Structure probing data (2A3 and DMS) for a 177-nucleotide construct. It was measured as part of the RMDB library RFM100. For 2A3 the reverse transcriptase was SuperScript II with manganese. For 2A3, 3,857 sequencing reads were counted. The DMS profile rests on 1,652 reads.

RNA sequence: GGGAACGACUCGAGUAGAGUCGAAAACACAAUCCACGAUUCCUCAUCAGCUAUAAAAGCAAAACCUUCAUAUCUAUCCUUGUUUCUAAACCAGUCUCAUAGAUAUGAAGGCUUUGUUUCUGAUGAAUCAAAUUGCAGUGUUCGCACUGCAAUUUGAAAAAGAAACAACAACAACAAC
Reactivity to 2A3 in 0.01 (KOAc 150mM, MgCl2 10mM, bicine 150mM(pH8.5), 24C), signal-to-noise 5, nucleotides 027 to 126: c120a000c020a030a100u110c080c020a070c080g060a120u080u060c000c000u000c020a000u000c010a000g010c020u160a040u080a300a190a070a000g000c000a010a000a010a010c000c000u000u000c000a000u010a010u010c000u000a010u050c010c000u020u020g050u030u090u090c160u260a120a010a030c000c000a000g040u020c030u010c150a010u000a000g000a000u000a000u000g000a000a000g020g000c000u000u000u000g000u000u010u000c000u010g000a020u020g020a030a090
Reactivity to DMS in 0.01 (KOAc 150mM, MgCl2 10mM, bicine 150mM(pH8.5), 24C), signal-to-noise 2, nucleotides 027 to 126: c240a150c220a050a080u000c080c000a120c000g010a130u000u060c000c030u000c020a000u000c000a010g000c300u000a000u010a040a180a140a020g000c000a020a030a000a030c030c000u030u020c000a010u000a000u000c000u000a020u000c170c030u000u000g000u000u000u010c080u020a040a030a070c030c000a020g030u000c160u060c090a020u000a000g000a010u000a000u000g020a000a000g020g030c060u020u000u000g000u000u000u000c020u000g000a010u010g000a070a140